[RMDB]
RNA sequence: GGGAACGACUCGAGUAGAGUCGAAAAGCGCGCCCGUCCUCGCGGGGCCGCAGCGUGAAGACGCCGCCGCGCAUCUCCAGGUGGCCGGGGGGGUCCCCGUUGGGCAGGGAGAGGGCGCUGACGAUGCAUCUUAUCAAUUGCCCCGUAGGGACUCCGCAGACCAAUAGAAUUUCGAUUCUAUUGGUCUAAAAGAAACAACAACAACAAC
Reactivity to 2A3 in 0.01 (KOAc 150mM, MgCl2 10mM, bicine 150mM(pH8.5), 24C), signal-to-noise 2, nucleotides 027 to 156: g010c020g010c020g010c020c000c000g010u030c010c040u070c040g050c000g000g020g040g000c060c030g060c030a040g070c020g020u090g160a070a020g050a050c070g030c050c020g050c030c020g000c020g030c000a030u000c010u040c070c010a040g070g120u020g150g000c050c020g020g010g000g000g000g030g080u190c000c020c000c010g050u160u220g040g000g040c000a020g000g030g010a030g000a010g000g170g000c010g010c050u080g010a040c050g050a060u100g020c030a040u010c030u100u170a150u160c060a110a300u120u050g000c010c000c000c000g030u070a060g010g000g000a010c000u050c080c040g050c040